[RMDB]
RNA sequence: GGGAACGACUCGAGUAGAGUCGAAAAGAUAUGGACCCUGCAAGGGAGCCAAGUGUCGGAAACGACACAUGGCAUCGAUCUUGUCAGGGUCCUAAGUCAAACCAGCAGUUGCUUCGGCAACUGCUGGCUAAAGGGUUUACUUCGGUAAACCCUUUAGAAAAGAAACAACAACAACAAC
Reactivity to DMS in 0.01 (KOAc 150mM, MgCl2 10mM, bicine 150mM(pH8.5), 24C), signal-to-noise 3, nucleotides 027 to 126: g000a050u000a280u000g010g000a010c000c000c000u010g010c000a020a000g000g010g000a070g000c010c000a020a070g040u000g010u010c000g030g000a080a070a130c000g010a010c000a000c000a080u000g000g010c010a220u010c260g000a080u010c000u000u010g000u010c020a010g020g010g010u000c000c000u000a010a060g000u000c000a130a100a300c010c000a000g000c000a020g000u000u000g000c000u010u010c240g010g010c000a000a010c000u000g010c000u000g010g000
Reactivity to 2A3 in 0.01 (KOAc 150mM, MgCl2 10mM, bicine 150mM(pH8.5), 24C), signal-to-noise 1, nucleotides 027 to 126: g000a010u050a010u050g000g000a000c000c000c000u020g030c010a030a070g040g170g100a040g000c000c000a080a100g000u000g010u020c000g000g000a050a010a030c000g020a000c000a000c020a010u000g000g020c010a060u300c160g090a240u060c020u020u070g240u300c040a000g020g000g000u020c000c010u000a010a000g000u000c010a000a000a080c000c000a000g010c010a000g000u010u020g010c000u090u300c300g180g000c000a000a000c000u000g010c030u000g000g030
The record gives the reactivity of an RNA of 177 nucleotides to DMS and 2A3. Values cover nucleotides 27 to 126. Source: RMDB library TTRDES, as collected in RNAgym. 2A3 adducts were read by reverse transcription with SuperScript II with manganese.